[RMDB]
Structure probing data (DMS) for a 177-nucleotide construct. It was measured as part of the RMDB library TTRINS. The RNA was probed in 150 mM KOAc, 10 mM MgCl2 and 150 mM bicine (pH 8.5) at 24 C.
RNA sequence: GGGAACGACUCGAGUAGAGUCGAAAAGAUAUGGAAAUGGUUGCGAAUAGGUCCGACGAAGAUUUCUGAGCUUCGGAAACGAAGCUCAGAAAUCAGAGGACUCAUUCGCACUCCAUUUCCUAAGUCACAAGCAUGAGUAGUUCGCUACUCAUGCUUGAAAAGAAACAACAACAACAAC
Reactivity to DMS in 0.01 (KOAc 150mM, MgCl2 10mM, bicine 150mM(pH8.5), 24C), signal-to-noise 1, nucleotides 027 to 126: g010a080u000a300u000g000g000a000a000a010u010g000g010u000u000g000c000g030a020a000u000a030g000g020u000c000c000g000a200c300g010a130a140g010a080u010u000u010c000u000g010a020g000c020u000u000c000g000g000a100a060a250c000g020a030a000g020c010u010c000a010g010a000a010a010u000c000a040g000a190g000g000a020c000u000c070a030u000u000c000g020c000a000c100u010c000c000a020u000u000u000c000c000u010a000a020g010u010c030a300